[RMDB]
RNA sequence: GGGAACGACUCGAGUAGAGUCGAAAAGCAAGUCGCAUCGCAAAACCGCGGCAAGUGGAGUUAGCGAGAGGAGGCUGUGUUUUGGCUUCCUUAAGCAAUCGGUCACCGAGAAGGUGUGGUCGUUACCUAGACAGUUUUCUGUUCGCAGAAAACUGAACCUGAGACAGUCUUUCGAGACUGUCUCAGGAAAAGAAACAACAACAACAAC
Reactivity to 2A3 in 0.01 (KOAc 150mM, MgCl2 10mM, bicine 150mM(pH8.5), 24C), signal-to-noise 2, nucleotides 027 to 156: g040c020a040a020g040u010c000g010c080a040u060c040g020c110a060a090a060a080c080c050g050c030g040g020c040a030a040g000u050g030g040a050g030u110u140a040g030c030g000a020g000a000g070g030a000g000g010c010u020g050u040g070u180u110u140u300g020g000c000u000u000c000c000u000u030a030a000g000c000a000a030u010c000g050g000u030c020a010c010c010g060a060g120a200a110g070g000u050g030u050g030g010u010c000g000u000u010a140c000c000u030a060g090a130c000a000g000u000u000u000u000c000u020g060u020u090c240g000c040a000g020a000a000a000a000c000u000g010a010a050

Notes:
The record gives the reactivity of an RNA of 207 nucleotides to 2A3. The 2A3 profile rests on 728 reads. Source: RMDB library M2RFPK, as collected in RNAgym. Values cover nucleotides 27 to 156.